[RMDB]
This 177-nucleotide RNA was probed chemically with 2A3 and DMS. For DMS the reverse transcriptase was MarathonRT.

RNA sequence: GGGAACGACUCGAGUAGAGUCGAAAAGAAUGAAAUAGCACACGGCCCACACAAGGACUUGUUAAUCCGUGGUGCUGUUGGAUCUGGAAAGUCGACAGGGCUCCCUUUCUAUUUGAGCAAGCGCGGACGUGCCUUUAAGGUUCGCCUUAAAGGCACGAAAAGAAACAACAACAACAAC
Reactivity to 2A3 in 0.01 (KOAc 150mM, MgCl2 10mM, bicine 150mM(pH8.5), 24C), signal-to-noise 4, nucleotides 027 to 126: g110a000a040u300g020a100a050a060u070a040g010c000a000c000a000c050g020g010c000c010c010a020c000a020c010a050a070g190g030a190c130u080u060g010u020u090a050a040u050c000c000g010u050g020g150u030g020c010u000g030u000u070g000g040a090u010c000u030g010g020a140a050a020g090u110c030g040a040c030a090g030g050g020c030u080c010c010c020u000u070u000c100u080a240u030u110u180g030a020g020c030a080a020g010c040g020c010g030g040a040
Reactivity to DMS in 0.01 (KOAc 150mM, MgCl2 10mM, bicine 150mM(pH8.5), 24C), signal-to-noise 4, nucleotides 027 to 126: g000a150a080u030g020a080a040a020u030a030g010c010a030c010a040c050g010g000c080c020c040a130c300a050c060a040a060g020g010a090c140u020u000g010u020u000a220a180u020c010c000g010u000g020g030u010g010c000u000g000u000u000g000g010a060u010c000u020g000g000a050a090a070g020u010c020g000a100c080a050g000g000g020c040u000c000c060c030u020u010u000c040u000a080u010u040u000g000a070g020c040a090a050g010c070g000c020g000g000a190
The reactions ran in a buffer of 150 mM KOAc, 10 mM MgCl2 and 150 mM bicine (pH 8.5), at 24 C. Reactivities are given for positions 27 through 126.